Record summary:
The record gives the reactivity of an RNA of 177 nucleotides to DMS.
RNA sequence: GGGAACGACUCGAGUAGAGUCGAAAACUGGAUAUCCUAAGCUUUUCAUUACUCGUGAAGAGGCUGUAAGGCAAGUUCGAAGCUGGAUAGGCUUCGAUGUUGAGGGUGCUCAUGCUUCCCGUAAUGCGUAUGAUAGGCUCUUCGGAGCCUAUCAUACAAAAGAAACAACAACAACAAC
Reactivity to DMS in 0.01 (KOAc 150mM, MgCl2 10mM, bicine 150mM(pH8.5), 24C), signal-to-noise 1, nucleotides 027 to 126: c030u000g000g000a020u000a060u000c000c010u000a130a160g000c040u000u000u010u030c010a040u010u010a150c050u010c080g010u050g000a130a170g010a010g000g010c220u000g000u000a080a040g000g010c050a170a150g020u010u000c000g000a040a010g020c010u000g020g040a190u000a160g000g000c010u000u010c000g020a000u010g020u010u020g020a110g020g010g030u000g030c060u000c040a050u000g030c050u000u040c000c000c000g030u020a100a050u010g000c270
The RNA was probed in 150 mM KOAc, 10 mM MgCl2 and 150 mM bicine (pH 8.5) at 24 C. DMS adducts were read by reverse transcription with MarathonRT.